[RMDB]
An RNA of 170 nucleotides, treated with DMS and 2A3 and read out base by base. Reactivities are given for positions 27 through 129. For DMS, 9,585 sequencing reads were counted. 2A3 adducts were read by reverse transcription with SuperScript II with manganese. The RNA was probed in 150 mM KOAc, 10 mM MgCl2 and 150 mM bicine (pH 8.5) at 24 C.
RNA sequence: GGGAACGACUCGAGUAGAGUCGAAAAUAUACACAUGUUUAGGUUUCAUGUGUACUUGCUAUUUUGGUGUCUUCUCUCUUUUGAACCUUAAGCUUAGAGCACCUAUGGGUGUCUAUGACUUUAAGGUAUGCUGAUGCCUUCGGGCAUCAGAAAAGAAACAACAACAACAAC
Reactivity to DMS in 0.01 (KOAc 150mM, MgCl2 10mM, bicine 150mM(pH8.5), 24C), signal-to-noise 4, nucleotides 027 to 129: u050a180u030a060c030a080c010a110u010g030u020u050u050a190g040g100u010u040u000c040a010u010g050u010g010u000a010c230u050u030g020c070u030a070u040u040u070u000g040g000u010g010u020c030u000u000c040u040c000u000c060u020u010u000u010g010a090a050c020c040u030u010a000a010g010c060u030u000a000g010a000g050c040a010c020c000u040a100u020g030g000g020u010g030u010c020u070a050u040g030a070c060u010u000u020a000a030g040g000u030a020u000g020
Reactivity to 2A3 in 0.01 (KOAc 150mM, MgCl2 10mM, bicine 150mM(pH8.5), 24C), signal-to-noise 4, nucleotides 027 to 129: u110a000u000a000c010a000c000a000u020g040u020u140u220a120g170g000u040u070u070c000a000u000g000u000g020u000a080c060u090u090g070c030u010a090u130u170u020u180g100g030u080g000u040c000u000u000c040u000c000u000c030u050u170u060u100g140a030a020c020c000u000u000a000a000g010c000u000u000a000g000a020g100c000a000c000c000u030a150u280g240g010g010u010g000u010c000u000a000u000g170a270c040u020u030u080a000a000g000g030u020a020u080g020